Structure probing data (2A3 and DMS) for a 177-nucleotide construct.
2A3 adducts were read by reverse transcription with SuperScript II with manganese.
It was measured as part of the RMDB library 15KREP.
[RMDB]
RNA sequence: GGGAACGACUCGAGUAGAGUCGAAAAAUGCCGAACGAAGGGAACGCGGGGGAAGGAUCAUAUGACGAGAGGGGAUGAGCUGGUAAAGAGGGGUGGAACGUCGGGUGGAAGCACUCCCAAGAAGAGCGAAUAACGAAUACUUCGGUAUUCGUUAUUCAAAAGAAACAACAACAACAAC
Reactivity to 2A3 in 0.01 (KOAc 150mM, MgCl2 10mM, bicine 150mM(pH8.5), 24C), signal-to-noise 1, nucleotides 027 to 126: a010u120g040c050c010g020a020a010c020g040a120a020g000g000g030a120a050c080g010c040g040g000g000g000g010a060a000g060g000a040u010c030a030u090a130u220g030a000c060g020a010g020a010g090g010g030g000a010u070g030a040g050c070u010g080g000u050a050a060a080g020a030g000g000g000g040u070g000g000a050a010c010g050u050c020g010g040g020u050g030g020a010a000g000c010a010c050u000c000c010c010a010a000g090a020a020g030a030g050c070
Reactivity to DMS in 0.01 (KOAc 150mM, MgCl2 10mM, bicine 150mM(pH8.5), 24C), signal-to-noise 1, nucleotides 027 to 126: a200u010g000c010c020g000a120a130c240g010a060a060g030g000g020a060a120c140g030c120g020g030g020g000g010a130a060g000g020a080u000c060a120u010a120u000g020a150c040g000a150g000a100g000g000g000g000a030u010g010a080g030c040u010g010g000u000a040a040a050g050a080g000g010g000g030u010g020g020a000a060c150g000u010c030g000g000g000u000g000g000a090a060g020c100a060c060u000c000c000c060a070a080g040a120a070g010a040g000c220